[RMDB]
The record gives the reactivity of an RNA of 177 nucleotides to 2A3 and DMS. Source: RMDB library VIROID, as collected in RNAgym. 2A3 adducts were read by reverse transcription with SuperScript II with manganese. The RNA was probed in 150 mM KOAc, 10 mM MgCl2 and 150 mM bicine (pH 8.5) at 24 C. For 2A3, 932 sequencing reads were counted.

RNA sequence: GGGAACGACUCGAGUAGAGUCGAAAAUCUCAGCCCCUCCACCUUGGGGUGCCCUAUCCGAGCACUGCAGUUUCGGUAGAAAGGCUAAGCACCUCGCAAUGAGGUAAGGUGGGACUUUUCCUUCUGAGGUGAAAAACUAGUUCGCUAGUUUUUCACCAAAAGAAACAACAACAACAAC
Reactivity to 2A3 in 0.01 (KOAc 150mM, MgCl2 10mM, bicine 150mM(pH8.5), 24C), signal-to-noise 1, nucleotides 027 to 126: u000c000u010c010a020g000c000c000c000c000u040c010c000a030c000c000u000u030g020g000g020g020u030g040c010c010c000u020a010u040c000c000g000a010g000c020a070c200u300g090c120a140g010u110u130u100c010g020g000u020a010g020a050a000a030g000g010c000u030a030a020g040c060a030c020c000u010c010g040c070a100a200u300g000a010g000g000u010a000a000g000g010u000g040g040g010a000c020u200u160u080u160c040c000u020u060c030u060g000a000
Reactivity to DMS in 0.01 (KOAc 150mM, MgCl2 10mM, bicine 150mM(pH8.5), 24C), signal-to-noise 1, nucleotides 027 to 126: u000c010u010c020a300g000c000c000c000c040u010c030c000a010c010c000u010u010g000g050g000g020u000g010c010c010c010u000a110u000c000c010g000a040g020c020a080c130u000g010c150a110g010u020u020u020c010g000g010u000a050g000a070a120a040g010g020c040u010a040a070g020c270a090c010c010u000c010g000c230a100a140u000g000a030g010g020u010a050a010g010g000u000g000g000g030a120c130u000u000u020u000c030c070u020u000c040u010g010a300